Annotation
This 177-nucleotide RNA was probed chemically with DMS and 2A3. The RNA was probed in 150 mM KOAc, 10 mM MgCl2 and 150 mM bicine (pH 8.5) at 24 C. For 2A3, 15,364 sequencing reads were counted.

[RMDB]
RNA sequence: GGGAACGACUCGAGUAGAGUCGAAAAAGACUGAUUGUGGGAUUAAAUUCUGCUUGAUAUUUGAGGAUUUAAUCAGGUUUCAGUCCAAUAAUGCCACAGUAGAGGACGUAGAUUAAUACGUCCUCAAGAAUAGUUGAUUUUUCGAAAUCAACUAUUCAAAAGAAACAACAACAACAAC
Reactivity to DMS in 0.01 (KOAc 150mM, MgCl2 10mM, bicine 150mM(pH8.5), 24C), signal-to-noise 5, nucleotides 027 to 126: a130g000a010c000u000g000a000u010u000g010u050g030g010g000a010u000u000a000a000a010u000u000c000u010g010c060u010u020g010a170u040a090u050u020u010g000a050g000g010a000u000u000u000a000a010u000c010a130g000g010u010u000u000c000a010g010u000c010c070a080a090u030a090a070u020g000c000c010a130c200a100g010u040a090g000a010g010g000a010c000g020u000a000g020a190u040u030a110a100u000a000c000g010u000c000c000u000c000a020a060
Reactivity to 2A3 in 0.01 (KOAc 150mM, MgCl2 10mM, bicine 150mM(pH8.5), 24C), signal-to-noise 9, nucleotides 027 to 126: a000g010a010c000u010g010a020u070u120g070u240g190g070g000a000u000u000a000a010a010u010u000c010u040g300c060u130u120g120a200u180a280u300u150u170g020a020g010g000a000u000u000u000a000a000u000c000a010g040g120u010u010u010c000a000g000u000c000c010a090a010u180a090a040u100g080c010c010a130c030a060g200u290a060g010a000g000g000a000c010g010u000a000g020a140u100u230a100a060u040a050c000g000u000c000c000u000c000a000a000